[RMDB]
RNA sequence: GGGAACGACUCGAGUAGAGUCGAAAAAGAUGAAAUGAUUCUCUCAACAUCUUCAAUAGAUACCUUGCUAUUUUUUCUGGCAUUAUCUAUAUGUGUGAGAAUAUCCUCUAGAGAAUCAGAAUCCUUUUUGAUGAUAGUGGAUCUCAAUGACAUGGGACGUAGAUCCGUUUUUCGAAACGGAUCUACGAAAAGAAACAACAACAACAAC
Reactivity to 2A3 in 0.01 (KOAc 150mM, MgCl2 10mM, bicine 150mM(pH8.5), 24C), signal-to-noise 3, nucleotides 027 to 156: a010g040a050u150g020a010a070a060u050g000a030u030u020c020u000c000u020c020a000a180c000a150u060c000u220u100c050a030a030u000a020g000a010u010a020c030c150u040u040g000c010u030a210u190u240u110u060u170u140c160u130g000g000c000a010u030u000a000u000c000u000a010u000a150u120g040u000g020u060g050a040g020a050a060u120a080u190c020c070u030c030u040a010g000a000g020a040a040u000c000a000g040a040a060u050c020c010u050u130u030u030u130g120a130u080g040a060u060a110g090u100g080g030a050u010c000u000c040a070a100u130g020a040c050a090u070g000g020g010a010
Reactivity to DMS in 0.01 (KOAc 150mM, MgCl2 10mM, bicine 150mM(pH8.5), 24C), signal-to-noise 1, nucleotides 027 to 156: a040g000a030u010g000a120a050a120u000g010a070u010u010c010u010c000u000c050a050a230c090a050u010c000u000u010c110a090a020u000a020g010a060u010a000c250c160u000u000g030c010u000a000u000u000u070u000u000u020c300u040g030g010c010a090u010u000a040u000c020u010a000u000a090u010g000u010g070u020g000a040g060a200a090u000a080u000c040c030u000c030u030a050g010a040g000a020a040u000c020a070g000a300a070u010c050c050u000u000u000u000u000g000a070u010g010a130u000a070g000u000g000g000a040u000c030u000c040a090a110u000g000a140c100a110u010g010g050g020a300
Source: RMDB library OK3TST, as collected in RNAgym. The record gives the reactivity of an RNA of 207 nucleotides to 2A3 and DMS. The DMS profile rests on 1,958 reads.